Structure probing data (2A3 and DMS) for a 177-nucleotide construct. The DMS profile rests on 3,565 reads. The data come from the RNA Mapping Database (RMDB), library TTRDEL. Conditions: 150 mM KOAc, 10 mM MgCl2 and 150 mM bicine (pH 8.5), 24 C.

RNA sequence: GGGAACGACUCGAGUAGAGUCGAAAAGAUAUGGAUACAUGGGAGAAUAUCGGUCGGAAACGACCGUAAGUUCGACGAUCAUGAAUCCUAAGUCAAACCGUGACUUCAGUUCGCUGAAGUCACGGAACUUGUUGUAUACCUUCGGGUAUACAACAAGAAAAGAAACAACAACAACAAC
Reactivity to 2A3 in 0.01 (KOAc 150mM, MgCl2 10mM, bicine 150mM(pH8.5), 24C), signal-to-noise 2, nucleotides 027 to 126: g000a010u000a000u040g010g000a000u030a080c010a000u000g020g010g000a020g010a000a010u010a010u030c000g000g020u010c000g000g010a010a000a010c010g000a000c000c020g000u010a300a050g010u000u000c040g200a190c010g000a090u010c000a010u000g040a080a020u000c000c000u010a000a000g010u000c020a020a060a110c010c010g000u000g010a000c000u000u000c000a010g070u020u170c250g080c140u010g000a000a000g010u020c000a000c010g000g000a000a020
Reactivity to DMS in 0.01 (KOAc 150mM, MgCl2 10mM, bicine 150mM(pH8.5), 24C), signal-to-noise 3, nucleotides 027 to 126: g010a010u000a020u010g000g000a010u000a130c030a010u000g000g010g000a010g010a020a020u000a130u000c000g000g010u000c000g020g000a010a020a020c000g010a000c000c000g010u000a010a080g030u000u000c000g000a070c290g010a060u010c000a010u000g000a100a040u000c000c000u000a000a080g000u010c000a120a100a180c000c000g020u000g000a030c000u000u000c000a000g000u000u010c250g010c000u000g010a020a010g010u000c000a000c000g000g010a010a020